[RMDB]
RNA sequence: GGGAACGACUCGAGUAGAGUCGAAAAAGCUGUUAGAAAAAAUGAACUGUGUACAUACAACAACAUAGAAUAUGAUAUGUGUACAUAGAGGAACAUAUCAUAAAAUGUGAGAGAAAAUUAAACAUAAGAUAUCACGUAAUUUCGAUUACGUGAUAUCAAAAGAAACAACAACAACAAC
Reactivity to 2A3 in 0.01 (KOAc 150mM, MgCl2 10mM, bicine 150mM(pH8.5), 24C), signal-to-noise 4, nucleotides 027 to 126: a000g090c120u100g050u180u090a140g170a080a160a020a050a070a120u090g020a060a060c030u050g020u040g010u130a070c040a060u190a020c040a070a010c010a020a000c000a050u090a050g170a170a040u040a030u050g000a000u010a000u030g020u000g050u060a030c030a060u230a060g170a130g100g000a020a000c000a000u020a000u010c020a000u060a030a130a010a020u060g000u030g010a060g020a000g070a130a130a040a030u140u170a100a070a010c040a030u110a080a030
Reactivity to DMS in 0.01 (KOAc 150mM, MgCl2 10mM, bicine 150mM(pH8.5), 24C), signal-to-noise 4, nucleotides 027 to 126: a160g010c050u000g020u000u020a090g000a010a050a070a100a090a100u000g010a100a120c080u010g030u020g010u000a060c090a070u010a070c140a070a070c100a070a080c020a050u000a040g000a130a140u000a000u000g000a010u000a010u000g010u010g010u040a080c040a110u000a090g020a190g000g000a150a050c010a000u000a020u000c000a020u010a020a060a070a060u000g000u000g000a100g010a110g010a050a050a070a070u010u010a080a070a040c050a050u010a090a130